[RMDB]
RNA sequence: GGGAACGACUCGAGUAGAGUCGAAAAGUUAGGUGAGGCGGCUACACGAACAUAGGCCACUGACCCCGAACGUCGCGAGACGCCCCGGGUCAGGACAGCUCUUCCCGGCUUAAGGGUUGAGCCCAGGUAUCACCCUGGCUAUUCGUAGCCAGGGUAAGUAUAAGUCUCUAUUCGUAGAGACUUAUACAAAAGAAACAACAACAACAAC
Reactivity to 2A3 in 0.01 (KOAc 150mM, MgCl2 10mM, bicine 150mM(pH8.5), 24C), signal-to-noise 2, nucleotides 027 to 156: g070u090u070a020g000g050u030g050a020g030g050c040g010g030c020u060a020c090a010c080g110a210a010c020a130u170a060g100g000c020c030a040c020u000g000a010c000c020c000c010g000a050a010c000g000u000c000g020c040g050a050g010a040c000g060c010c020c010c010g000g000g000u010c010a000g000g040a020c020a000g000c010u000c010u060u040c010c000c000g020g000c040u130u200a080a100g040g000g020u020u050g010a000g010c000c020c020a060g020g050u120a060u200c050a020c000c000c000u000g000g000c000u010a030u070u070c180g040u010a000g000c000c000a000g000g030g010u010a000a000
Reactivity to DMS in 0.01 (KOAc 150mM, MgCl2 10mM, bicine 150mM(pH8.5), 24C), signal-to-noise 2, nucleotides 027 to 156: g010u000u000a050g010g000u000g010a090g000g040c030g000g020c030u010a060c060a100c060g010a070a110c090a120u010a130g010g010c000c000a140c010u000g010a010c020c010c000c030g030a070a020c010g010u000c010g000c300g000a300g010a020c000g000c000c010c020c230g030g030g030u000c010a020g020g000a060c050a080g010c000u000c010u000u000c000c000c010g030g010c130u010u000a060a170g000g020g000u000u010g030a130g000c020c010c040a110g000g000u000a090u000c060a070c000c000c000u010g000g030c010u000a050u000u020c180g030u000a020g020c000c000a020g010g000g020u000a000a020

Source: RMDB library M2RFPK, as collected in RNAgym. An RNA of 207 nucleotides, treated with 2A3 and DMS and read out base by base. High DMS reactivity at an A or C suggests that its Watson-Crick edge is free. DMS adducts were read by reverse transcription with MarathonRT. As a SHAPE reagent, 2A3 marks flexible, mostly unpaired nucleotides at the ribose 2'-OH. The DMS profile rests on 3,890 reads. 2A3 adducts were read by reverse transcription with SuperScript II with manganese.